RNA sequence: GGGAACGACUCGAGUAGAGUCGAAAAAGAGUAUCGGGGGUUGGAUAUCCCUCGUGAAUAUUGCAGGCAUCGACUGCAAAGACUAAACACUCCUCAAGACCGAUAGCGAACAAGUAGCGUGAGCGAAUCAGGCAGCAUAUUUCGAUAUGCUGCCUGAAAAAGAAACAACAACAACAAC
Reactivity to 2A3 in 0.01 (KOAc 150mM, MgCl2 10mM, bicine 150mM(pH8.5), 24C), signal-to-noise 4, nucleotides 027 to 126: a020g130a010g040u050a030u040c030g000g000g010g020g000u080u130g110g030a110u120a120u170c020c000c000u000c000g000u000g000a080a000u230a110u010u030g000c000a010g070g000c050a170u070c120g070a070c060u010g000c040a000a050a000g020a000c000u030a030a090a000c030a000c000u020c020c020u060c060a060a080g050a040c000c060g080a080u070a000g020c020g020a030a050c070a170a080g110u070a000g080c020g020u020g050a020g060c010g040a010a070
Reactivity to DMS in 0.01 (KOAc 150mM, MgCl2 10mM, bicine 150mM(pH8.5), 24C), signal-to-noise 2, nucleotides 027 to 126: a030g020a050g030u000a080u010c010g050g000g010g000g020u030u000g040g030a150u010a120u040c000c000c000u000c000g000u000g000a170a050u010a050u000u010g010c010a000g000g000c020a140u070c260g020a070c010u000g000c010a000a020a030g000a190c110u000a110a110a070c130a050c010u010c000c040u000c050a060a060g000a120c050c060g020a040u020a110g000c030g010a090a030c190a020a100g030u000a090g000c050g010u000g000a110g000c130g000a050a130